[RMDB]
RNA sequence: GGGAACGACUCGAGUAGAGUCGAAAACUAGGAUGCUAUUCAGGCACAGGGCCUCAACAGGCUAGAGUUGGGCUGGCCUAGAAGGGUACAAUGGAAUCCUAUAAGCAUUGGUGAACAAGCUACGGCCGGCAUCAUUGGGAUUCGUCCCAAUGAUGCCAAAAGAAACAACAACAACAAC
Reactivity to 2A3 in 0.01 (KOAc 150mM, MgCl2 10mM, bicine 150mM(pH8.5), 24C), signal-to-noise 1, nucleotides 027 to 126: c010u000a000g090g040a110u020g000c020u050a030u080u130c020a050g080g000c010a050c070a090g080g100g000c000c020u070c020a060a050c040a070g050g010c010u000a020g050a000g180u070u050g020g080g000c010u010g000g060c030c000u000a050g020a070a030g110g000g010u120a070c060a030a160u080g020g030a050a060u130c020c020u000a030u010a190a000g040c020a040u040u070g010g010u070g070a100a000c030a060a000g070c000u060a060c040g080g000c050c080
Reactivity to DMS in 0.01 (KOAc 150mM, MgCl2 10mM, bicine 150mM(pH8.5), 24C), signal-to-noise 1, nucleotides 027 to 126: c050u000a030g000g020a020u010g010c050u010a050u030u000c140a100g010g000c030a100c090a190g000g000g000c050c060u000c060a040a150c190a080g000g020c100u020a060g010a120g000u020u000g010g030g000c010u000g000g000c020c000u010a070g000a050a000g010g030g020u000a030c080a000a030u000g020g010a050a040u000c010c060u000a090u000a000a050g000c080a040u000u010g010g000u000g000a050a080c030a070a050g010c030u010a120c070g000g060c120c170